[RMDB]
The record gives the reactivity of an RNA of 177 nucleotides to 2A3 and DMS. Source: RMDB library M2PK50, as collected in RNAgym. For DMS the reverse transcriptase was MarathonRT. Values cover nucleotides 27 to 126. For 2A3 the reverse transcriptase was SuperScript II with manganese.
RNA sequence: GGGAACGACUCGAGUAGAGUCGAAAAGAAUGCCCAUUCGUGGGCAUUCCACCGCAGCGUAGCCGAAAGGCAUUUUAUGCGUACGCUGGCGAAAGCCUAAAAAAGCUCCACUUUUCGAAGUGGAGAAUUUAGAACUACGUUUCGACGUAGUUCUAAAAAAAGAAACAACAACAACAAC
Reactivity to 2A3 in 0.01 (KOAc 150mM, MgCl2 10mM, bicine 150mM(pH8.5), 24C), signal-to-noise 3, nucleotides 027 to 126: g010a010a000u000g000c010c010c000a010u020u090c250g040u030g010g000g010c000a000u000u010c000c020a070c020c010g040c020a000g020c020g020u020a030g050c010c010g100a110a040a010g060g000c010a010u050u070u030u080a140u110g040c010g000u020a000c030g000c010u020g040g010c000g030a070a020a010g060c020c080u130a090a130a040a050a030a010g040c000u000c000c010a010c000u050u040u110u170c230g010a010a000g000u000g000g000a010g000a010a010
Reactivity to DMS in 0.01 (KOAc 150mM, MgCl2 10mM, bicine 150mM(pH8.5), 24C), signal-to-noise 3, nucleotides 027 to 126: g000a030a010u000g000c000c000c000a050u000u020c170g010u000g000g010g000c000a000u000u000c000c060a170c110c030g020c040a030g000c010g000u000a100g000c010c020g000a090a090a150g010g020c030a050u010u010u010u010a110u020g010c190g010u000a000c050g000c020u000g020g010c000g000a090a060a120g000c000c020u000a010a040a070a090a090a110g020c000u000c000c000a030c000u010u000u000u020c130g010a020a010g010u000g000g000a000g000a010a010